The data come from the RNA Mapping Database (RMDB), library OK2TST. The record gives the reactivity of an RNA of 177 nucleotides to 2A3 and DMS. For DMS, 3,334 sequencing reads were counted. Conditions: 150 mM KOAc, 10 mM MgCl2 and 150 mM bicine (pH 8.5), 24 C. Values cover nucleotides 27 to 126. 2A3 adducts were read by reverse transcription with SuperScript II with manganese.

RNA sequence: GGGAACGACUCGAGUAGAGUCGAAAAAACAAAGCAUCAACCCAAUGAAAAGGGGUGAAAUGCGCGGCAUCAUUCACCGCCUGUUCAACGCGCGGUAAUGUCAAUUUGCCGUCUGGCCAGAGCAGCGCUGCUAUUCUUGUUUCGACAAGAAUAGCAGAAAAGAAACAACAACAACAAC
Reactivity to 2A3 in 0.01 (KOAc 150mM, MgCl2 10mM, bicine 150mM(pH8.5), 24C), signal-to-noise 3, nucleotides 027 to 126: a000a040c090a030a040a010g020c010a000u050c010a010a020c020c000c010a030a090u210g160a090a030a030a030g060g010g000g000u020g000a030a080a010u040g000c040g000c000g040g010c000a030u040c010a010u060u030c060a020c030c010g000c000c000u090g100u180u180c100a150a150c060g010c010g000c000g040g010u030a030a020u010g030u090c060a090a170u050u000u090g010c000c000g020u010c060u070g100g030c030c010a040g000a000g090c060a020g060c050g000
Reactivity to DMS in 0.01 (KOAc 150mM, MgCl2 10mM, bicine 150mM(pH8.5), 24C), signal-to-noise 4, nucleotides 027 to 126: a070a040c100a030a070a110g030c010a010u000c040a270a080c000c000c010a050a080u010g000a110a060a130a120g020g010g020g020u000g000a030a100a030u000g010c010g000c050g000g010c030a060u000c040a030u000u000c190a030c020c000g030c020c010u000g000u010u010c200a100a110c160g010c300g010c030g000g000u020a030a010u000g000u010c160a070a090u010u010u000g010c000c000g010u000c110u000g000g000c020c060a100g000a080g020c060a030g000c190g010